This 177-nucleotide RNA was probed chemically with DMS and 2A3.

RNA sequence: GGGAACGACUCGAGUAGAGUCGAAAAAUACUCAUGAAAGUCGCUAUUUAGUGAGUUUAGAUACGUGUUUCGACGUUACUGCGGCACGCGUAUCGGUGGUGUCUAGAACCGGUGCCACUGCCGCCUAUCAUGUCAAGCGGUUCGCUGCUUGGCAUGAAAAAGAAACAACAACAACAAC
Reactivity to DMS in 0.01 (KOAc 150mM, MgCl2 10mM, bicine 150mM(pH8.5), 24C), signal-to-noise 9, nucleotides 027 to 126: a060u030a050c010u000c010a030u010g000a090a070a060g010u020c200g020c120u030a070u020u010u010a180g010u000g000a020g010u000u010u010a060g010a100u030a040c090g010u000g000u000u000u010c030g000a140c050g010u010u020a070c130u010g000c000g000g010c000a010c130g000c300g020u000a000u000c000g000g010u000g000g030u020g010u030c140u020a130g010a140a040c040c030g010g020u000g000c010c030a300c300u000g000c020c030g000c010c130u010a070
Reactivity to 2A3 in 0.01 (KOAc 150mM, MgCl2 10mM, bicine 150mM(pH8.5), 24C), signal-to-noise 9, nucleotides 027 to 126: a000u120a010c000u000c000a010u060g070a050a060a020g170u150c070g030c160u150a100u100u120u080a050g010u010g020a000g020u030u070u100a100g020a050u130a070c060g030u040g050u060u060u100c070g050a070c070g060u100u110a070c070u110g000c000g000g000c010a010c050g020c030g010u020a010u020c010g000g000u030g020g060u140g080u080c110u110a070g040a120a030c010c000g000g010u010g000c000c010a030c030u030g000c000c010g020c000c000u130a160